An RNA of 207 nucleotides, treated with DMS and 2A3 and read out base by base. The data come from the RNA Mapping Database (RMDB), library OK3TST. The DMS profile rests on 2,704 reads. Conditions: 150 mM KOAc, 10 mM MgCl2 and 150 mM bicine (pH 8.5), 24 C.
RNA sequence: GGGAACGACUCGAGUAGAGUCGAAAAGGGAAAGCAGGGCUGAGUGCAUCUCCCCUCUGAGAGCAUGAGGUGCUAGCAGAGCUCGUGGGCCGGGCCUUUACCGUCCGGAUGGGUCUGGGAUGAAGGCCACAGGUCACCCAGAGCGGGACUGGGUCAAUAAAAUGGUGGAUUUCGAUCCACCAUUUUAAAAAGAAACAACAACAACAAC
Reactivity to DMS in 0.01 (KOAc 150mM, MgCl2 10mM, bicine 150mM(pH8.5), 24C), signal-to-noise 2, nucleotides 027 to 156: g020g000g000a100a070a090g010c030a140g010g010g000c030u030g030a290g010u010g000c070a090u010c010u000c000c060c090c050u000c040u000g010a130g000a300g080c060a110u020g000a260g030g030u000g040c020u000a120g000c000a070g010a100g000c030u020c040g000u000g050g000g000c000c000g010g030g000c020c010u010u000u000a050c010c010g010u010c010c020g010g010a090u010g010g050g020u010c000u020g070g000g040a050u000g020a040a040g010g000c000c040a070c060a040g020g000u020c030a080c050c040c010a070g000a070g040c030g000g010g000a210c160u000g010g000g010u010c040a040a220
Reactivity to 2A3 in 0.01 (KOAc 150mM, MgCl2 10mM, bicine 150mM(pH8.5), 24C), signal-to-noise 1, nucleotides 027 to 156: g040g000g010a040a040a020g020c040a100g070g010g040c030u020g020a050g020u060g090c050a300u050c010u000c060c080c030c030u070c060u130g080a090g000a000g000c020a150u130g010a030g020g020u080g100c020u020a040g010c010a010g030a010g000c000u000c020g040u150g010g000g000c010c030g020g000g000c010c000u000u030u010a050c000c000g000u000c050c090g130g050a220u300g070g000g050u110c170u240g080g050g000a050u170g000a000a000g010g000c000c000a030c010a060g000g000u060c010a060c050c010c000a030g000a000g000c030g030g000g000a030c080u030g010g000g000u040c010a080a010